Background
An RNA of 177 nucleotides, treated with 2A3 and DMS and read out base by base. The RNA was probed in 150 mM KOAc, 10 mM MgCl2 and 150 mM bicine (pH 8.5) at 24 C. Reactivities are given for positions 27 through 126. The DMS profile rests on 2,002 reads.
[RMDB]
RNA sequence: GGGAACGACUCGAGUAGAGUCGAAAAAGAGAUGGGGGCAUGGAGAUAGUUUUUACGUACUGGAGGAAAGUGUGUAAAACCAUGGCAAUGUCACCUUUUACACAAAUGCCAUUUUCCAAAUGCAAAACCGUGAGUAAUGAUUCGUCAUUACUCACGGAAAAGAAACAACAACAACAAC
Reactivity to 2A3 in 0.01 (KOAc 150mM, MgCl2 10mM, bicine 150mM(pH8.5), 24C), signal-to-noise 2, nucleotides 027 to 126: a000g120a020g020a040u090g010g000g000g010g050c000a000u020g020g000a060g010a010u060a060g020u030u010u030u030u030a010c010g000u010a000c010u000g050g070a140g090g130a280a070a040g020u030g000u010g000u030a000a020a010a010c040c020a040u020g050g000c040a050a080u060g020u040c000a170c020c040u000u080u150u140a100c130a000c000a010a100a030u110g010c040c000a030u040u000u000u010c020c000a050a070a060u100g010c030a080a110a030a030
Reactivity to DMS in 0.01 (KOAc 150mM, MgCl2 10mM, bicine 150mM(pH8.5), 24C), signal-to-noise 3, nucleotides 027 to 126: a080g000a120g010a060u010g030g020g000g020g010c070a040u010g000g010a100g000a090u010a060g020u010u000u010u000u010a030c030g000u000a010c040u020g010g010a240g000g030a110a110a040g010u000g020u000g000u000a020a020a030a030c100c120a070u000g000g010c080a040a070u010g000u000c030a040c050c070u000u000u000u000a070c190a070c100a080a050a110u000g010c050c070a060u000u000u000u020c010c030a070a090a080u000g010c140a040a050a060a080